[RMDB]
RNA sequence: GGGAACGACUCGAGUAGAGUCGAAAAUGUGCCAGGCAUGGCUCCAGGCACUGAAAUACACCAGGGGACAAAAUGAAGUCCCCACCCUCAUGCACCAUAGAGUGCAAACAGGGGAGUGUCCAGACACAAACAAGGGGCCUAGGGCAGUGGUGCAUGACGCUAAUCCAUAGUUCGCUAUGGAUUAGCGAAAAGAAACAACAACAACAAC
Reactivity to 2A3 in 0.01 (KOAc 150mM, MgCl2 10mM, bicine 150mM(pH8.5), 24C), signal-to-noise 1, nucleotides 027 to 156: u060g010u030g000c010c010a050g010g100c090a150u120g090g000c070u000c000c000a000g020g000c040a140c040u040g020a110a110a000u180a100c100a060c020c080a030g000g000g000g000a000c080a060a070a040a210u300g040a120a050g000u000c000c040c000c000a040c000c020c010u030c030a030u010g000c010a030c010c000a030u090a300g210a090g130u010g000c000a000a000a100c070a020g020g000g000g000a010g010u030g000u000c080c030a060g030a140c020a010c040a180a190a000c060a180a170g000g010g000g020c000c000u010a010g010g040g000c040a100g050u030g000g000u000g000c000a000u000g000a020

Notes: An RNA of 207 nucleotides, treated with 2A3 and read out base by base. The reactions ran in a buffer of 150 mM KOAc, 10 mM MgCl2 and 150 mM bicine (pH 8.5), at 24 C. The data come from the RNA Mapping Database (RMDB), library OK3TST.